[RMDB]
RNA sequence: GGGAACGACUCGAGUAGAGUCGAAAAGAAUUCCGUCAUCUUCCAUGGGGGUGCCAAGCCAAGUUUGCCCUAACAUCUGGAUAUCUUUUUUAGCGGAAGUGUAUCGCCAAUAAUUGUCGUUCAGCCGAAACUCAUAUAAGUAAAUCGGCUGACCGUCGCGUCCCGUCCCCUUCGGGGGACGGGACGCAAAAGAAACAACAACAACAAC
Reactivity to 2A3 in 0.01 (KOAc 150mM, MgCl2 10mM, bicine 150mM(pH8.5), 24C), signal-to-noise 3, nucleotides 027 to 156: g010a010a040u050u000c000c000g000u040c010a110u000c050u100u010c050c020a050u080g000g000g020g000g040u020g050c030c030a040a050g030c050c010a050a060g030u020u080u070g060c020c000c010u060a090a030c020a060u030c030u030g000g030a020u010a110u070c100u060u120u090u040u040u170a030g000c020g020g020a030a010g010u040g040u120a090u110c030g050c040c030a020a040u110a110a110u120u130g050u020c000g000u010u000c000a000g000c010c000g010a080a080a040c040u060c120a120u140a070u070a270a050g030u030a050a030a140u000c000g010g000c020u000g000a000c000c000g020u020c060
Reactivity to DMS in 0.01 (KOAc 150mM, MgCl2 10mM, bicine 150mM(pH8.5), 24C), signal-to-noise 2, nucleotides 027 to 156: g000a090a110u010u000c010c000g000u000c000a040u000c070u000u020c050c010a120u010g010g030g020g010g050u000g020c080c060a010a020g030c070c020a020a160g020u000u000u000g010c000c010c000u010a040a120c110a060u010c030u010g010g000a110u000a020u000c010u020u020u000u000u000u000a040g030c070g040g020a000a100g030u000g030u000a070u000c090g030c050c030a050a050u030a090a190u010u000g010u000c000g040u000u010c010a030g020c000c010g000a020a070a010c010u000c040a180u000a070u000a010a010g020u000a000a150a040u000c040g000g030c010u010g000a000c020c010g000u000c030
The record gives the reactivity of an RNA of 207 nucleotides to 2A3 and DMS. For 2A3, 1,632 sequencing reads were counted. 2A3 adducts were read by reverse transcription with SuperScript II with manganese. The RNA was probed in 150 mM KOAc, 10 mM MgCl2 and 150 mM bicine (pH 8.5) at 24 C.